[RMDB]
RNA sequence: GGGAACGACUCGAGUAGAGUCGAAAAAGCUUGUGUCUACCGGAAACCAGACAAGAAGAUAUAUGCCUCUCAUAUGACACAGCAUGGAUUUUGUGUUAUGGAUGGACACUGUCUGAAGCCAUUUGAAUAAGUCUGGCCUAUUCGUAGGCCAGACUUAAAAAGAAACAACAACAACAAC
Reactivity to DMS in 0.01 (KOAc 150mM, MgCl2 10mM, bicine 150mM(pH8.5), 24C), signal-to-noise 1, nucleotides 027 to 126: a020g010c090u000u000g010u000g010u000c030u010a040c130c020g040g000a080a110a100c140c070a120g000a090c040a050a170g000a090a040g010a070u000a060u000a050u000g000c040c010u000c260u000c020a090u020a090u000g000a020c040a040c060a130g000c180a120u000g060g040a120u000u000u020u000g040u000g020u000u000a070u000g000g010a040u010g000g010a020c010a040c020u000g020u020c000u000g000a030a080g020c040c070a120u000u000u010g010a090a070
Chemical mapping of a 177-nucleotide RNA with DMS. The data come from the RNA Mapping Database (RMDB), library OK2TST. Values cover nucleotides 27 to 126. DMS adducts were read by reverse transcription with MarathonRT. The reactions ran in a buffer of 150 mM KOAc, 10 mM MgCl2 and 150 mM bicine (pH 8.5), at 24 C.